[RMDB]
RNA sequence: GGGAACGACUCGAGUAGAGUCGAAAAUGGGGGCGUAUCGCAGGUCAACGUGUCCGAUUCGGCAGACACCGAAUUCACCGCGAUCGCACGCCGGAUGGACGGGAAGCUGGUUUUGGGCACCGCCGACCGUGAGUGAUCCGUUCGCGGAUCACUCACGAAAAGAAACAACAACAACAAC
Reactivity to DMS in 0.01 (KOAc 150mM, MgCl2 10mM, bicine 150mM(pH8.5), 24C), signal-to-noise 2, nucleotides 027 to 126: u010g020g000g010g000g080c010g000u060a080u000c070g050c070a090g040g010u020c080a080a300c230g000u010g050u090c060c040g030a040u000u030c070g000g080c010a060g080a050c280a170c100c030g000a030a080u030u000c090a050c050c030g000c090g000a020u000c100g040c070a060c000g010c060c050g020g000a170u000g000g000a010c090g000g000g000a250a060g000c000u000g000g000u000u000u000u040g010g000g040c030a020c000c040g000c080c160g010a130c050
Reactivity to 2A3 in 0.01 (KOAc 150mM, MgCl2 10mM, bicine 150mM(pH8.5), 24C), signal-to-noise 2, nucleotides 027 to 126: u080g000g010g000g050g000c070g020u130a040u100c050g030c110a090g000g030u020c060a070a000c050g020u020g030u060c000c070g070a090u060u120c000g020g030c070a070g050a060c000a040c030c010g110a070a030u110u100c000a020c020c000g000c030g060a030u040c040g040c080a020c020g100c080c000g000g020a070u070g000g030a050c030g010g000g090a080a110g000c020u140g000g150u030u040u130u100g140g000g000c020a070c080c000g040c020c030g010a010c050

Chemical mapping of a 177-nucleotide RNA with DMS and 2A3.
2A3 is a SHAPE reagent: it acylates the 2'-hydroxyl of flexible nucleotides of all four kinds.